[RMDB]
RNA sequence: GGGAACGACUCGAGUAGAGUCGAAAAAGCGUUUUCACGCGCUGGCUCGAAGCAUGCAUUGCUUGCUUGGGAGCUGUUGCCGCGGGGAACAAUAUCUCGGGAGCAGUUGUUGCGUUCGUCGUCAUCUGGUGGGCGCUUUGCAAUGUGCGCGAUGUGCACACAUAGUUGGCUUCGGCCAACUAUGUGUAAAAGAAACAACAACAACAAC
Reactivity to 2A3 in 0.01 (KOAc 150mM, MgCl2 10mM, bicine 150mM(pH8.5), 24C), signal-to-noise 2, nucleotides 027 to 156: a000g050c030g030u000u030u010u010c240a300c020g030c010g000c030u020g010g000c000u030c010g040a000a000g010c030a020u040g000c060a300u060u300g040c020u010u000g040c000u070u050g190g080g000a010g000c060u100g250u200u080g090c100c000g040c020g000g010g000g000a020a040c040a050a080u100a090u090c070u020c000g080g000g000a090g050c050a030g000u030u010g060u070u050g010c050g030u010u020c010g010u010c000g030u000c050a170u030c170u120g010g030u010g050g020g040c000g010c110u060u090u070g030c010a010a070u110g010u040g000c010g000c030g080a070u150g060u110g090c060
Reactivity to DMS in 0.01 (KOAc 150mM, MgCl2 10mM, bicine 150mM(pH8.5), 24C), signal-to-noise 1, nucleotides 027 to 156: a080g000c190g020u000u000u000u010c040a100c020g000c000g030c040u000g000g030c040u000c010g000a120a040g000c000a030u000g000c050a250u000u010g030c020u000u010g000c000u000u040g010g030g030a030g020c040u000g040u000u000g010c080c000g030c040g040g000g010g040a040a070c070a090a120u000a090u000c050u010c040g040g000g010a130g030c070a080g000u000u000g010u010u000g040c060g020u000u000c050g000u000c040g060u010c110a100u000c070u000g010g000u000g000g020g010c030g010c020u000u010u000g000c070a130a100u010g010u000g010c070g000c040g000a110u000g000u000g000c060